Source: RMDB library 15KLIB, as collected in RNAgym.
The record gives the reactivity of an RNA of 170 nucleotides to DMS and 2A3.
The RNA was probed in 150 mM KOAc, 10 mM MgCl2 and 150 mM bicine (pH 8.5) at 24 C.
The 2A3 profile rests on 47,436 reads.
For 2A3 the reverse transcriptase was SuperScript II with manganese.
RNA sequence: GGGAACGACUCGAGUAGAGUCGAAAAUUCCUAGGUCCGGAGUCUACCUCCAUCUGGUCUGUUCGGGCCCUCUUCGCCGGGGGGGCUCCUUCCCCAUCCUUAUCCUUCUUUCCAAGAAUUCCUUUGAUCACCUAUUCCUUCGGGAAUAGGAAAAGAAACAACAACAACAAC
Reactivity to DMS in 0.01 (KOAc 150mM, MgCl2 10mM, bicine 150mM(pH8.5), 24C), signal-to-noise 7, nucleotides 027 to 129: u000u000c000c000u020a040g040g030u040c000c030g000g000a100g000u030c060u030a100c030c010u030c030c040a100u030c030u000g000g010u000c070u050g000u010u050c120g000g000g000c010c030c030u020c020u010u020c050g050c080c050g020g010g020g010g000g000g030c020u030c030c020u000u000c010c010c010c020a100u050c020c040u040u050a000u030c050c000u000u000c000u010u000u010c030c050a110a100g000a070a150u030u010c000c040u030u030u030g000a150u060c130a140
Reactivity to 2A3 in 0.01 (KOAc 150mM, MgCl2 10mM, bicine 150mM(pH8.5), 24C), signal-to-noise 9, nucleotides 027 to 129: u040u010c010c000u010a040g020g020u030c040c030g010g010a020g020u010c050u110a110c020c000u010c010c000a040u030c050u060g020g030u020c020u040g120u070u140c050g000g010g000c010c010c000u020c010u060u080c040g060c050c040g000g000g000g010g000g000g000c010u040c000c000u010u020c000c000c000c000a070u070c010c000u070u050a060u070c020c000u020u030c000u030u060u000c020c020a040a020g030a070a100u050u050c020c000u090u060u120g050a080u120c030a020